Structure probing data (DMS and 2A3) for a 177-nucleotide construct. The data come from the RNA Mapping Database (RMDB), library OK1LIB. For DMS the reverse transcriptase was MarathonRT. The DMS profile rests on 28,301 reads.
RNA sequence: GGGAACGACUCGAGUAGAGUCGAAAACAACCACCGUAAGUUCAGAAGUAUUGUCAUCUCAGUAUGCUGCGCAGGUUAUCAAAGCAGGAGCAGAAGAGAACCAAGCUGAUUUGAUGACAAUAAUGGGGACUAUAUCAAUAUUCGUAUUGAUAUAGUCAAAAGAAACAACAACAACAAC
Reactivity to DMS in 0.01 (KOAc 150mM, MgCl2 10mM, bicine 150mM(pH8.5), 24C), signal-to-noise 9, nucleotides 027 to 126: c180a130a190c060c040a110c100c080g000u020a060a070g000u010u000c060a120g000a090a100g020u000a010u000u000g000u000c000a000u000c000u010c060a030g000u040a090u020g020c010u000g000c120g020c140a170g010g010u000u000a080u020c070a020a300a140g010c010a140g000g030a230g030c020a030g010a270a140g000a040g010a050a040c070c060a100a110g000c000u000g000a080u020u020u010g000a010u000g000a010c000a000a010u000a010a030u020g000g020g010
Reactivity to 2A3 in 0.01 (KOAc 150mM, MgCl2 10mM, bicine 150mM(pH8.5), 24C), signal-to-noise 9, nucleotides 027 to 126: c040a020a040c010c020a040c020c010g130u130a100a070g060u100u070c080a080g030a250a020g160u030a020u010u010g000u000c000a000u000c000u000c010a040g030u090a090u260g040c020u030g010c060g010c080a090g030g070u070u070a100u140c070a090a100a020g000c020a040g040g210a080g000c020a020g030a220a020g060a040g010a040a010c030c010a060a030g000c000u010g020a070u100u110u220g000a000u000g000a000c000a000a000u030a020a030u100g040g010g060